The record gives the reactivity of an RNA of 177 nucleotides to 2A3 and DMS. The 2A3 profile rests on 3,152 reads. For DMS, 2,062 sequencing reads were counted.

RNA sequence: GGGAACGACUCGAGUAGAGUCGAAAAUAACAAAAAGCGCCAAGACGACGUCGCACAGGCUGUGGAGCGACGUGGUGCAUAAACGCAGAUAGAUACACAGCCUGAGGACAGAAGAACUGUCCACAAACAGGUAAUCCAUGUUCGCAUGGAUUACCUGAAAAGAAACAACAACAACAAC
Reactivity to 2A3 in 0.01 (KOAc 150mM, MgCl2 10mM, bicine 150mM(pH8.5), 24C), signal-to-noise 3, nucleotides 027 to 126: u070a010a030c080a030a060a080a020a010g040c000g020c010c030a090a070g160a090c050g020a000c000g020u020c000g010c010a040c030a020g000g000c000u010g020u000g020g100a050g000c000g000a000c000g000u000g020g010u060g020c020a010u250a080a180a000c070g000c060a030g060a120u090a060g100a030u130a130c000a000c000a000g000c000c010u010g010a070g000g000a000c000a030g070a130a030g060a200a150c010u000g000u020c000c000a000c000a010a020a000
Reactivity to DMS in 0.01 (KOAc 150mM, MgCl2 10mM, bicine 150mM(pH8.5), 24C), signal-to-noise 2, nucleotides 027 to 126: u020a180a030c080a070a030a050a020a080g020c100g000c040c020a140a110g030a220c070g060a090c040g000u000c000g070c000a070c000a190g000g000c000u000g120u000g000g000a120g000c020g000a000c030g010u000g020g020u010g010c020a030u000a010a140a190c220g000c050a150g010a080u020a100g000a110u010a090c010a000c000a000g020c000c000u000g000a200g000g000a000c000a000g020a180a050g000a120a070c000u000g020u000c020c000a110c100a060a010a090
It was measured as part of the RMDB library OK1LIB.